[RMDB]
RNA sequence: GGGAACGACUCGAGUAGAGUCGAAAAGAUAUGGACGAGCUACCCACCCUCGAUCAGACGAUGAAAGCAUUAGUCUCGGAAACGAGACUAAUGCUGGAGUCUGCAGAGAGGAGGCUCGUCCUAAGUCCAACAGUAGUGUCUUCGGACACUACUGUUGAAAAGAAACAACAACAACAAC
Reactivity to DMS in 0.01 (KOAc 150mM, MgCl2 10mM, bicine 150mM(pH8.5), 24C), signal-to-noise 3, nucleotides 027 to 126: g000a150u000a140u040g000g000a000c020g020a030g010c040u000a180c020c030c030a300c050c000c000u010c000g030a300u000c000a000g010a030c000g000a100u010g000a120a080a000g030c000a000u000u010a000g000u000c020u020c000g010g000a090a080a250c010g010a010g000a000c000u000a010a030u000g000c000u000g000g000a100g000u000c000u010g000c280a010g020a300g000a020g000g000a030g000g000c010u000c020g000u000c000c000u010a000a080g020u010c170
Reactivity to 2A3 in 0.01 (KOAc 150mM, MgCl2 10mM, bicine 150mM(pH8.5), 24C), signal-to-noise 1, nucleotides 027 to 126: g120a070u270a180u300g010g000a000c000g000a010g000c030u120a300c010c030c000a030c010c010c000u000c020g020a050u040c000a000g000a020c000g300a300u040g110a050a050a000g040c010a000u000u000a000g000u010c000u010c010g010g030a080a050a090c050g040a000g000a000c000u000a000a010u020g020c000u000g000g000a010g020u000c010u020g000c050a000g080a000g010a010g000g060a010g010g000c000u010c000g020u000c000c010u020a010a020g020u000c000